Source: RMDB library OK2TST, as collected in RNAgym. The record gives the reactivity of an RNA of 177 nucleotides to DMS and 2A3.
[RMDB]
RNA sequence: GGGAACGACUCGAGUAGAGUCGAAAAUGUCAUCCUUGAUGAGGUAGCUCCUGAGGGUGCCCUCGUAGCGCAUCCCCGCCUUCUCCAUGACCCGCCCGGAGGCAGGAUUCCCCACGAAGUGGAGGGCAUUACAUGGACAUUUCGAUGUCCAUGUAAUAAAAGAAACAACAACAACAAC
Reactivity to DMS in 0.01 (KOAc 150mM, MgCl2 10mM, bicine 150mM(pH8.5), 24C), signal-to-noise 9, nucleotides 027 to 126: u000g010u010c040a060u000c030c050u000u010g020a080u000g010a070g000g020u000a110g010c050u000c010c070u010g010a100g020g020g010u000g010c030c010c020u000c070g010u010a060g000c130g020c080a080u000c050c010c010c070g010c030c020u000u010c020u000c030c040a070u010g000a120c040c020c030g000c030c020c060g000g010a070g010g020c040a050g000g000a190u000u000c020c010c000c120a130c170g010a070a100g020u010g010g010a050g010g010g010c110
Reactivity to 2A3 in 0.01 (KOAc 150mM, MgCl2 10mM, bicine 150mM(pH8.5), 24C), signal-to-noise 4, nucleotides 027 to 126: u110g020u040c010a040u070c050c030u060u130g070a090u070g020a030g040g040u070a030g030c010u040c050c030u060g050a130g040g040g040u030g020c010c010c000u050c050g080u070a020g020c020g000c060a060u050c000c000c000c010g000c000c010u040u040c020u000c020c020a100u100g070a100c000c000c010g050c030c020c000g030g020a040g010g000c030a030g050g000a050u050u070c000c000c000c000a040c030g050a100a010g020u060g060g020a040g020g020g010c010

Overview
The DMS profile rests on 19,763 reads.